[RMDB]
RNA sequence: GGGAACGACUCGAGUAGAGUCGAAAAAAGAAUGGCAGGAGAGGAAGGAAACAAUGAAGUAGUAAAGCUCUUGUUACUAUGGGAGGGAAACCUUCAUUAUGCCAUCAUAGGAGCUUUAGAGGGCGACUACCACCGACUAAUUCGUUAGUCGGUGGUAAAAAGAAACAACAACAACAAC
Reactivity to 2A3 in 0.01 (KOAc 150mM, MgCl2 10mM, bicine 150mM(pH8.5), 24C), signal-to-noise 1, nucleotides 027 to 126: a000a000g120a050a000u130g010g020c010a020g020g040a080g030a010g020g080a010a030g020g050a140a020a020c020a030a040u180g000a090a020g020u100a000g030u030a060a030a030g030c000u020c030u130u090g070u030u040a010c050u060a020u070g030g000g000a040g010g020g050a040a050a000c000c010u000u000c010a030u080u130a050u130g000c010c020a020u000c000a010u070a030g060g000a060g000c040u040u090u080a070g060a020g060g000g050c020g010a030c010
Reactivity to DMS in 0.01 (KOAc 150mM, MgCl2 10mM, bicine 150mM(pH8.5), 24C), signal-to-noise 2, nucleotides 027 to 126: a060a030g000a090a030u000g010g010c050a010g010g000a130g010a090g000g000a070a030g020g000a080a060a090c050a080a040u010g030a110a120g000u010a060g000u000a020a040a070g000c060u000c040u010u000g000u010u000a040c120u010a040u000g000g000g000a070g000g000g010a060a040a050c030c010u010u000c020a060u000u000a070u010g010c050c030a020u010c090a050u000a030g000g000a080g000c020u000u000u010a080g010a050g010g000g010c050g000a110c120

Chemical mapping of a 177-nucleotide RNA with 2A3 and DMS.